[RMDB]
RNA sequence: GGGAACGACUCGAGUAGAGUCGAAAAUUCAAACGCACCUGUCCUUGCUCAAGUGCUGGGAUUGUGUGCCAACGGCUAUGAUAGAUAUGAAUAGAGCACGAGAUAAUGUGCUUACAGAAAGUUGGUUUUUUCCAGCAUAAUUCGUUAUGCUGGAAAAAAAAGAAACAACAACAACAAC
Reactivity to 2A3 in 0.01 (KOAc 150mM, MgCl2 10mM, bicine 150mM(pH8.5), 24C), signal-to-noise 1, nucleotides 027 to 126: u040u000c000a020a000a020c030g040c000a000c000c000u000g030u000c000c000u000u030g000c040u050c000a000a290g110u050g090c000u000g000g050g000a020u000u210g040u090g000u020g000c000c000a200a080c050g180g000c050u040a000u090g130a060u080a250g110a050u040a000u150g230a160a020u000a080g110a060g130c000a000c000g060a060g210a090u080a020a130u250g000u000g020c000u000u050a060c000a000g160a000a150a000g000u000u000g000g020u000u000
Reactivity to DMS in 0.01 (KOAc 150mM, MgCl2 10mM, bicine 150mM(pH8.5), 24C), signal-to-noise 2, nucleotides 027 to 126: u020u000c110a100a110a160c270g000c000a000c000c090u000g000u040c030c010u000u000g010c050u000c270a070a040g080u050g000c000u000g000g000g000a060u000u000g020u140g000u000g040c000c010a020a130c190g020g000c100u000a160u000g000a190u010a060g000a110u030a190u000g070a040a000u060a150g010a000g000c010a020c000g000a120g020a100u030a070a090u060g020u000g000c000u000u000a030c160a150g020a180a060a020g080u060u040g000g000u000u000